[RMDB]
RNA sequence: GGGAACGACUCGAGUAGAGUCGAAAAGCUUUCGGGCAACGUAUGCAGAUCCUCCGCACGCGCCGUGGGCUCUCCCGCCCGGUGGUCGCUGGUCUGCUGGGCAUGUCCCCCUCGUGGGUGAAACAGGUGGAGCGAGGAGAGAUCGGCAUGCCGAAACCAUUGCGCCUCAAUUCGUUGAGGCGCAAUGAAAAGAAACAACAACAACAAC
Reactivity to 2A3 in 0.01 (KOAc 150mM, MgCl2 10mM, bicine 150mM(pH8.5), 24C), signal-to-noise 2, nucleotides 027 to 156: g030c020u030u010u050c030g020g000g040c060a140a030c080g130u160a020u020g000c000a010g000a020u000c010c020u000c040c010g060c010a080c020g020c030g040c040c020g050u130g030g010g000c060u000c070u100c080c030c000g010c000c000c000g080g000u010g020g000u090c080g000c300u220g130g020u020c010u020g030c010u010g010g010g010c050a080u150g070u000c000c030c010c010c000u200c130g040u300g020g000g000u150g060a110a020a010c030a010g000g000u030g020g070a060g010c020g010a020g030g010a010g000a010g000a000u000c010g000g000c000a020u040g030c020c010g010a060a000a000c020
Chemical mapping of a 207-nucleotide RNA with 2A3. Reactivities are given for positions 27 through 156. Conditions: 150 mM KOAc, 10 mM MgCl2 and 150 mM bicine (pH 8.5), 24 C.